[RMDB]
RNA sequence: GGGAACGACUCGAGUAGAGUCGAAAAGACUGAUGUAGAGUUCGGUUGGAGCGACAAGUAUUUAGCUUGAGAAAGCUAAAUCACCUCGGUAUGAUUAGGGUGAGACCUAGGAACCGUAGGGGUAUUCAAUGCUGUAUUGCGUUCGCGCAAUACAGAACUAGUGAGGAUGGUUCGCCAUCCUCACUAGAAAAGAAACAACAACAACAAC
Reactivity to 2A3 in 0.01 (KOAc 150mM, MgCl2 10mM, bicine 150mM(pH8.5), 24C), signal-to-noise 2, nucleotides 027 to 156: g040a010c050u060g040a060u130g030u100a010g010a020g060u120u060c060g010g000u020u030g040g010a030g040c050g050a030c040a060a020g050u070a060u010u010u000a000g000c010u040u030g010a030g030a120a000a000g010c000u010a010a010a000u020c010a020c010c000u020c010g010g010u300a190u170g040a030u020u050a010g020g020g000u030g130a090g050a060c000c010u000a020g010g010a040a000c000c040g020u030a030g010g010g010g010u050a100u060u180c070a050a100u140g050c000u000g010u000a000u000u000g020c010g020u020u040c240g010c000g000c070a000a000u000a000c000a000g000a000a020
Reactivity to DMS in 0.01 (KOAc 150mM, MgCl2 10mM, bicine 150mM(pH8.5), 24C), signal-to-noise 1, nucleotides 027 to 156: g030a120c050u020g000a090u010g010u000a080g050a160g020u000u000c020g020g040u000u010g000g000a080g000c030g000a050c040a020a080g020u000a050u000u000u000a020g020c020u000u000g030a300g010a280a050a060g000c000u000a020a020a050u000c000a020c010c000u020c050g020g010u010a040u020g010a220u010u010a020g000g000g000u040g010a300g030a180c000c000u000a110g020g000a050a060c030c020g080u000a040g010g000g010g000u000a090u000u000c070a040a080u020g000c040u010g000u020a000u000u000g000c000g030u020u010c300g130c070g040c000a040a000u010a010c000a020g010a010a090
Chemical mapping of a 207-nucleotide RNA with 2A3 and DMS. For 2A3 the reverse transcriptase was SuperScript II with manganese. Source: RMDB library M2RFPK, as collected in RNAgym. In probing experiments dimethyl sulfate is read out at A N1 and C N3, which are open when not base-paired. The reactions ran in a buffer of 150 mM KOAc, 10 mM MgCl2 and 150 mM bicine (pH 8.5), at 24 C. Values are in units of 0.01, from 0 to 300, in steps of 10.